Source: RMDB library RNAMAK, as collected in RNAgym. Chemical mapping of a 207-nucleotide RNA with 2A3. The 2A3 profile rests on 1,622 reads.

RNA sequence: GGGAACGACUCGAGUAGAGUCGAAAAGCGUACUACUAGCGUUGAUCGAAGCGCAACAGCUCCGAAGAAGCUGAAUCCCAAAUAGGAUUCAGCGUAACGGAGACAUGCGUUAAUUGAUGCGCUAGUAUCGCAAAACUUUGAACUUCGGUUCAAAGAAGGCAAAUAGUGAGUUCGCUCACUAUUUGCCAAAAGAAACAACAACAACAAC
Reactivity to 2A3 in 0.01 (KOAc 150mM, MgCl2 10mM, bicine 150mM(pH8.5), 24C), signal-to-noise 3, nucleotides 027 to 156: g000c010g040u100a050c020u010a010c000u010a010g000c000g040u030u130g080a020u010c030g100a050a010g000c010g020c010a020a070c060a130g080c010u050c000c070g300a300a050g040a030a000g030c000u010g000a000a000u030c000c030c100a220a270a110u300a080g000g000a000u000u000c000a010g000c000g010u010a000a000c000g010g000a010g000a010c010a030u020g000c000g020u030u040a090a050u040u110g000a000u030g000c000g000c000u010a010g000u000a000u020c000g000c000a000a000a000a070c000u030u000u000g000a000a000c000u010u110c300g130g000u010u010c000a010a000a000g030a010a040